[RMDB]
RNA sequence: GGGAACGACUCGAGUAGAGUCGAAAAUGGCUCGGCUGCGAAAGACCUUUGCCAGCGGGCGUACCCGCAGCGUCGAGUGGCGCAAGCAGCAGUUGCGCGCGCUACAGAAGUUGAUGGACGAGAACGAAAGUAGAGAUACCUUCGGGUAUCUCUACUUAAAAGAAACAACAACAACAAC
Reactivity to 2A3 in 0.01 (KOAc 150mM, MgCl2 10mM, bicine 150mM(pH8.5), 24C), signal-to-noise 2, nucleotides 027 to 126: u140g040g000c000u000c010g090g000c010u000g000c030g050a000a120a060g100a120c030c000u080u030u080g030c070c030a000g000c010g050g000g000c050g030u110a130c010c010c000g120c040a060g010c000g100u090c040g010a040g040u010g010g000c020g000c030a060a010g000c030a020g030c000a060g100u230u140g000c020g000c020g000c000g000c010u000a010c010a010g100a150a020g020u080u070g080a150u080g030g020a030c090g010a100g040a260a050c030g030a210
Reactivity to DMS in 0.01 (KOAc 150mM, MgCl2 10mM, bicine 150mM(pH8.5), 24C), signal-to-noise 5, nucleotides 027 to 126: u030g000g000c030u000c010g020g000c010u000g000c070g010a030a050a090g010a140c300c040u000u000u020g010c160c030a040g010c000g000g000g000c050g000u020a070c020c010c010g000c160a060g000c050g000u000c020g010a160g000u010g000g000c000g020c000a050a300g020c020a040g010c230a140g020u040u010g000c000g000c300g010c010g000c000u010a020c010a150g000a050a090g000u010u010g010a050u030g000g000a050c060g010a090g000a080a060c080g020a110
Conditions: 150 mM KOAc, 10 mM MgCl2 and 150 mM bicine (pH 8.5), 24 C.
An RNA of 177 nucleotides, treated with 2A3 and DMS and read out base by base.
For DMS the reverse transcriptase was MarathonRT.
The DMS profile rests on 9,712 reads.
It was measured as part of the RMDB library OK1LIB.
For 2A3, 1,037 sequencing reads were counted.